RNA sequence: GGGAACGACUCGAGUAGAGUCGAAAAGAUAUGGAUGUUCACCGAAGCGAAGAACUCGGAAACGAGGGAGCUUGUGACUGCAUCCUAAGUCAAAAGUAAAGUUUGUACUUCGGUACAAACUUUACAACUUAAUCCGAUACUUCGGUAUCGGAUUAAGAAAAGAAACAACAACAACAAC
Reactivity to 2A3 in 0.01 (KOAc 150mM, MgCl2 10mM, bicine 150mM(pH8.5), 24C), signal-to-noise 2, nucleotides 027 to 126: g030a020u110a060u170g000g010a010u000g000u120u010c010a000c070c170g200a040a010g000c040g170a300a000g010a120a070c010u000c030g020g000a090a070a040c020g000a010g000g030g010a010g000c000u060u030g010u010g010a080c160u170g000c000a010u000c000c000u010a120a020g040u040c040a000a080a080a090g000u000a000a000a010g000u010u000u010g000u000a000c010u040u130c300g000g000u020a000c000a010a000a000c000u000u000u000a000c010a000a000
Reactivity to DMS in 0.01 (KOAc 150mM, MgCl2 10mM, bicine 150mM(pH8.5), 24C), signal-to-noise 4, nucleotides 027 to 126: g000a040u000a300u010g010g000a020u000g010u000u000c030a030c020c300g010a050a020g000c000g010a120a150g000a100a160c000u000c000g000g000a150a070a170c020g000a020g000g030g000a100g020c030u010u000g000u000g010a000c300u010g010c000a020u000c000c020u010a050a150g010u010c050a070a100a070a100g010u000a010a010a010g010u000u000u000g010u000a000c000u000u010c260g020g000u000a010c000a000a000a000c000u000u000u000a000c000a110a130
Chemical mapping of a 177-nucleotide RNA with 2A3 and DMS. The RNA was probed in 150 mM KOAc, 10 mM MgCl2 and 150 mM bicine (pH 8.5) at 24 C. For 2A3, 3,414 sequencing reads were counted.